[RMDB]
RNA sequence: GGGAACGACUCGAGUAGAGUCGAAAAAAACGCUGACCGUACGCCCGAACAUGACGGUGUCGCAGGCCGUCGCCAGCGUGCGGGAACGCGCCUCGGGCCUGCGCAGCGAUGCACGAACCACCGCCUAUCCGCAACGAAAAUUCGUUUUCGUUGCGGAAAAAGAAACAACAACAACAAC
Reactivity to 2A3 in 0.01 (KOAc 150mM, MgCl2 10mM, bicine 150mM(pH8.5), 24C), signal-to-noise 2, nucleotides 027 to 126: a000a000a000c030g000c030u030g010a040c000c030g030u010a000c000g010c000c010c020g040a110a020c020a070u230g020a000c000g000g060u020g140u240c060g010c060a030g060g030c000c010g010u020c010g080c110c040a060g030c040g010u000g000c020g020g020g020a010a010c000g010c000g010c000c000u000c000g030g020g020c000c030u060g010c020g000c000a000g000c020g090a040u090g060c060a030c040g010a070a000c010c000a030c010c020g000c000c030u040a090
Reactivity to DMS in 0.01 (KOAc 150mM, MgCl2 10mM, bicine 150mM(pH8.5), 24C), signal-to-noise 1, nucleotides 027 to 126: a050a010a020c060g000c010u000g020a240c010c020g100u000a050c300g000c000c000c010g080a010a090c300a100u000g000a040c080g000g000u030g000u010c170g000c060a000g000g000c000c000g070u000c000g010c010c240a120g010c020g010u010g000c080g000g000g030a040a050c010g020c000g010c010c000u000c020g000g000g100c010c000u000g080c000g010c080a050g000c080g000a080u000g000c080a040c060g030a070a090c030c000a060c020c000g010c000c050u000a200

Notes: Source: RMDB library OK1LIB, as collected in RNAgym. This 177-nucleotide RNA was probed chemically with 2A3 and DMS. The RNA was probed in 150 mM KOAc, 10 mM MgCl2 and 150 mM bicine (pH 8.5) at 24 C. Values are in units of 0.01, from 0 to 300, in steps of 10. The 2A3 profile rests on 1,146 reads. Values cover nucleotides 27 to 126.